Structure probing data (2A3) for a 207-nucleotide construct. For 2A3 the reverse transcriptase was SuperScript II with manganese. Conditions: 150 mM KOAc, 10 mM MgCl2 and 150 mM bicine (pH 8.5), 24 C.

RNA sequence: GGGAACGACUCGAGUAGAGUCGAAAAGAAAGAAAGAAAGAAAUCUGACAGAAUGACGGAUUCGAUCGUUGUGGUCGGCGGGCCACCACGUCAUUCCUUCGCACUGUCUCCGGGCAGACCGCCAUACAAAAGCGGAUCUACUUCGGUAGAUCCGCAAGUCGUUUCUCUUGUUCGCAAGAGAAACGACAAAAGAAACAACAACAACAAC
Reactivity to 2A3 in 0.01 (KOAc 150mM, MgCl2 10mM, bicine 150mM(pH8.5), 24C), signal-to-noise 1, nucleotides 027 to 156: g020a060a030a020g090a000a020a020g050a010a020a010g050a000a190a050u110c090u220g010a040c040a060g130a160a250u150g010a060c020g000g000a000u090u080c100g040a060u190c060g040u080u060g000u000g000g000u050c040g010g110c030g000g000g070c000c000a000c000c000a000c000g000u060c000a020u060u020c000c010u020u100c010g030c010a040c040u000g000u000c000u050c030c060g100g010g000c000a020g060a170c020c040g020c010c000a120u180a250c030a020a040a050a010g010c000g000g010a000u000c010u010a000c040u010u060c170g010g000u000a000g030a010u050c000c010g040c000a000a000